[RMDB]
Conditions: 150 mM KOAc, 10 mM MgCl2 and 150 mM bicine (pH 8.5), 24 C.
This 177-nucleotide RNA was probed chemically with 2A3 and DMS.
RNA sequence: GGGAACGACUCGAGUAGAGUCGAAAACUGGUGAGCGCAAGUUAAAUUGUCGUUCGCAGUUGUUUUAGUCGCUUUGGACUUUUGACCACGGAUGUACUGGCACUGGUGUUAAGAGCGAUAUGAGGAAUCGAGAAUAUAAAUUCGUUUAUAUUCUCGAAAAAGAAACAACAACAACAAC
Reactivity to 2A3 in 0.01 (KOAc 150mM, MgCl2 10mM, bicine 150mM(pH8.5), 24C), signal-to-noise 9, nucleotides 027 to 126: c020u070g060g010u040g030a000g000c010g000c010a020a000g040u120u190a130a100a170u110u030g150u280c020g000u000u010c010g000c020a030g000u020u030g070u010u060u010u090a040g010u010c010g000c020u030u020u060g040g030a020c000u040u030u020u050g210a280c000c010a080c080g070g050a130u220g050u260a110c040u030g020g000c020a000c020u030g010g010u030g050u190u080a090a030g020a010g030c010g010a010u020a130u150g140a060g060g100a020a050
Reactivity to DMS in 0.01 (KOAc 150mM, MgCl2 10mM, bicine 150mM(pH8.5), 24C), signal-to-noise 9, nucleotides 027 to 126: c010u000g020g020u010g010a010g010c010g000c000a010a010g000u000u060a090a140a170u000u000g010u030c020g020u000u000c000g020c010a040g000u000u000g010u000u010u000u010a120g010u000c020g010c030u000u000u000g010g000a040c020u000u000u010u000g000a150c020c010a030c130g000g010a150u020g020u020a100c210u000g000g000c020a030c040u000g000g010u000g010u010u010a090a070g000a030g000c020g010a020u000a070u010g010a120g010g010a100a140
Annotation
2A3 adducts were read by reverse transcription with SuperScript II with manganese.